Structure probing data (2A3 and DMS) for a 170-nucleotide construct. The data come from the RNA Mapping Database (RMDB), library 15KLIB. For DMS the reverse transcriptase was MarathonRT. The RNA was probed in 150 mM KOAc, 10 mM MgCl2 and 150 mM bicine (pH 8.5) at 24 C. Values cover nucleotides 27 to 129. As a SHAPE reagent, 2A3 marks flexible, mostly unpaired nucleotides at the ribose 2'-OH. For 2A3, 4,307 sequencing reads were counted. The DMS profile rests on 6,651 reads.
[RMDB]
RNA sequence: GGGAACGACUCGAGUAGAGUCGAAAAGAAGCACUCCCAAGAAGAGCAGAGAGAAGGCAAGAAUCGGACGAUUUCCCCAUGACGCUGGAGACAUCCUGGAAGGGGAAAGAGGAGGGUGGAAGAAAAAUACGGAAGACCUUCGGGUCUUCCAAAAGAAACAACAACAACAAC
Reactivity to 2A3 in 0.01 (KOAc 150mM, MgCl2 10mM, bicine 150mM(pH8.5), 24C), signal-to-noise 3, nucleotides 027 to 129: g010a020a000g030c050a030c110u040c050c010c010a000a020g040a000a000g000a000g020c110a010g090a000g000a010g000a130a060g010g010c030a000a000g000a060a010u040c020g050g030a030c040g080a040u010u000u000c030c000c000c000a060u100g060a030c040g020c070u000g000g000a030g010a020c040a040u010c020c030u010g010g020a030a040g000g000g000g070a040a060a000g050a020g020g000a020g010g000g000u060g010g000a020a030g030a000a110a040a000a020u190a070c120
Reactivity to DMS in 0.01 (KOAc 150mM, MgCl2 10mM, bicine 150mM(pH8.5), 24C), signal-to-noise 4, nucleotides 027 to 129: g010a100a060g050c130a130c010u000c030c080c080a140a110g020a180a060g030a050g060c090a090g030a120g030a020g050a130a030g060g030c060a000a050g030a040a050u030c100g000g020a030c160g150a130u000u040u010c010c020c000c080a150u050g030a120c200g000c080u000g000g020a020g010a050c240a140u040c010c060u010g000g000a080a030g070g010g020g050a000a090a030g020a070g000g000a030g000g030g050u030g060g000a030a060g050a010a120a100a050a090u050a150c210